[RMDB]
RNA sequence: GGGAACGACUCGAGUAGAGUCGAAAAGUUUAUCUGCACCGUAUCGCCGUACUGGAAGUCGAGCACCUUGCGCUGAAGCCAGGCUGCGGUGCCGGAGGUGGCACUAUCGGCGAUGGCCUGCAAAGUGUCACGGAAAAUAGUUCGCUAUUUUCCGUGAAAAAGAAACAACAACAACAAC
Reactivity to DMS in 0.01 (KOAc 150mM, MgCl2 10mM, bicine 150mM(pH8.5), 24C), signal-to-noise 7, nucleotides 027 to 126: g010u010u010u000a080u020c080u000g010c040a050c060c100g020u010a050u000c030g020c010c020g020u010a090c080u000g010g000a080a090g010u000c090g010a160g010c020a080c090c090u010u010g020c040g030c090u010g010a130a110g000c030c050a070g000g000c120u000g020c140g010g000u000g000c010c070g010g010a130g010g020u000g010g000c000a020c010u000a140u000c030g010g010c010g000a050u000g000g000c030c060u000g000c040a050a070a080g010u010g000
Reactivity to 2A3 in 0.01 (KOAc 150mM, MgCl2 10mM, bicine 150mM(pH8.5), 24C), signal-to-noise 4, nucleotides 027 to 126: g020u050u120u130a180u080c050u040g010c020a000c030c020g040u060a030u030c010g010c010c010g040u060a070c040u090g060g130a190a080g150u150c070g030a020g020c000a020c010c010u030u110g010c040g010c120u180g100a060a010g010c000c010a000g040g000c050u060g010c000g030g010u010g000c000c010g040g050a130g040g100u190g040g020c010a000c010u040a040u170c010g010g000c010g030a050u030g050g000c030c010u050g000c020a050a070a080g100u100g050